[RMDB]
RNA sequence: GGGAACGACUCGAGUAGAGUCGAAAAGAUAUGGACACGAUAAGUGUGAGAACAACAGCUCGGAAACGAGACAUGUUUAAAGCACUUUUGACGUGUCCUAAGUCAAAGCGCAUCUUCGGAUGCGCAAUCCUCCGAUAAGGUUCGCCUUAUCGGAGGAAAAAGAAACAACAACAACAAC
Reactivity to DMS in 0.01 (KOAc 150mM, MgCl2 10mM, bicine 150mM(pH8.5), 24C), signal-to-noise 2, nucleotides 027 to 126: g000a020u000a300u010g000g000a020c010a000c010g000a150u000a010a040g010u000g000u000g000a300g010a060a050c110a000a000c140a030g000c000u000c010g010g000a070a040a280c000g010a010g000a030c120a080u000g050u000u010u000a020a090a180g040c000a000c000u000u000u000u040g000a180c090g000u000g000u010c000c010u010a020a110g010u000c010a090a100a050g000c000g000c000a000u010c010u000u010c260g060g010a000u010g010c000g000c000a010a030
Reactivity to 2A3 in 0.01 (KOAc 150mM, MgCl2 10mM, bicine 150mM(pH8.5), 24C), signal-to-noise 2, nucleotides 027 to 126: g020a010u040a020u180g030g000a030c010a000c000g080a070u020a080a040g050u000g100u160g050a090g050a020a020c020a030a000c020a030g060c010u010c000g000g020a090a050a030c010g040a020g130a080c100a300u080g010u000u040u010a110a140a010g040c000a000c000u040u040u080u160g200a100c030g020u000g000u060c000c000u000a030a020g000u000c020a010a120a050g000c020g010c000a010u020c000u040u110c300g130g020a000u000g040c000g000c010a010a000

Chemical mapping of a 177-nucleotide RNA with DMS and 2A3. Source: RMDB library TTRDEL, as collected in RNAgym. For 2A3, 2,399 sequencing reads were counted.